[RMDB]
RNA sequence: GGGAACGACUCGAGUAGAGUCGAAAAGCUAGGCAUUUCGAUGCCUAGCGAGCGCAGAGUCUUUGCAUCUCUGAAUCACACAACAGCCGUGUCUAUGCGUGGGAGUAUCCCUCUUCGGAGGGAUAAAAACUUGCAAUAUCUUCGGAUAUUGCAAGUUAAAAGAAACAACAACAACAAC
Reactivity to 2A3 in 0.01 (KOAc 150mM, MgCl2 10mM, bicine 150mM(pH8.5), 24C), signal-to-noise 3, nucleotides 027 to 126: g000c000u010a000g000g000c010a030u050u090u120c240g110a010u000g000c000c010u000a000g010c000g000a010g030c100g000c020a010g010a020g060u040c050u110u230u200g020c030a110u060c010u000c000u010g050a100a100u110c020a040c010a010c010a160a080c020a060g080c020c040g080u040g040u080c040u090a080u120g030c030g010u060g020g060g000a060g050u030a020u000c000c010c010u020c010u020u010c060g110g000a000g000g040g000a000u000a000a000a000
Reactivity to DMS in 0.01 (KOAc 150mM, MgCl2 10mM, bicine 150mM(pH8.5), 24C), signal-to-noise 5, nucleotides 027 to 126: g010c000u000a000g000g000c000a000u000u000u010c160g000a020u000g010c000c010u000a000g000c000g000a040g020c130g010c030a030g000a050g010u010c060u000u000u000g010c110a090u000c020u000c020u010g010a120a110u010c070a050c050a050c060a050a100c140a060g000c060c090g010u000g000u010c050u000a060u000g000c090g010u010g000g000g010a090g010u000a020u000c000c000c000u000c010u000u010c170g020g010a020g010g000g000a000u000a000a040a060